[RMDB]
RNA sequence: GGGAACGACUCGAGUAGAGUCGAAAACUCUUUUACUCGGCAUGAUACCACCGUUAUCGGGUCAACAGAGUAGUUGCAAAUGACAACAAUGCUCAGGGGUAUGCUCUCGCUGCCUAAUGGCGGUGCGCGGACGACUCAAUGUUCGCAUUGAGUCGAAAGAGGUAACCCUAUUCGUAGGGUUACCUCUAAAAGAAACAACAACAACAAC
Reactivity to 2A3 in 0.01 (KOAc 150mM, MgCl2 10mM, bicine 150mM(pH8.5), 24C), signal-to-noise 3, nucleotides 027 to 156: c030u030c020u070u140u050u080a130c120u060c000g060g000c040a060u160g010a050u160a090c010c030a000c000c010g070u030u030a060u070c020g000g000g030u030c000a010a030c010a020g020a000g010u100a000g010u030u050g040c060a140a190a240u170g060a130c010a070a010c010a120a130u110g020c010u010c010a010g040g020g030g040u080a030u220g030c010u000c000u000c060g020c080u020g010c010c000u160a260a110u150g030g000c010g010g000u020g000c080g010c010g080g010a020c000g000a000c000u030c000a000a000u020g020u060u060c130g000c120a000u000u000g000a000g000u000c000g000a000a040
Reactivity to DMS in 0.01 (KOAc 150mM, MgCl2 10mM, bicine 150mM(pH8.5), 24C), signal-to-noise 1, nucleotides 027 to 156: c100u000c030u000u000u000u000a090c080u010c000g000g000c060a070u040g070a100u000a040c020c000a170c030c000g030u000u000a100u000c020g000g000g000u030c000a150a120c060a130g030a060g000u000a090g030u000u020g010c020a050a090a190u000g020a100c040a020a070c040a050a090u030g010c090u000c070a090g000g000g000g000u010a110u010g020c040u000c030u000c070g040c000u010g000c000c010u000a060a090u010g050g050c020g020g000u000g000c090g020c030g010g000a160c000g000a010c040u010c010a000a030u000g010u010u000c280g020c000a030u000u000g000a030g010u010c010g000a030a020
An RNA of 207 nucleotides, treated with 2A3 and DMS and read out base by base. Reactivities are rounded to 0.1 and cut off at 0 and 3. For DMS, 2,296 sequencing reads were counted. Conditions: 150 mM KOAc, 10 mM MgCl2 and 150 mM bicine (pH 8.5), 24 C. DMS adducts were read by reverse transcription with MarathonRT.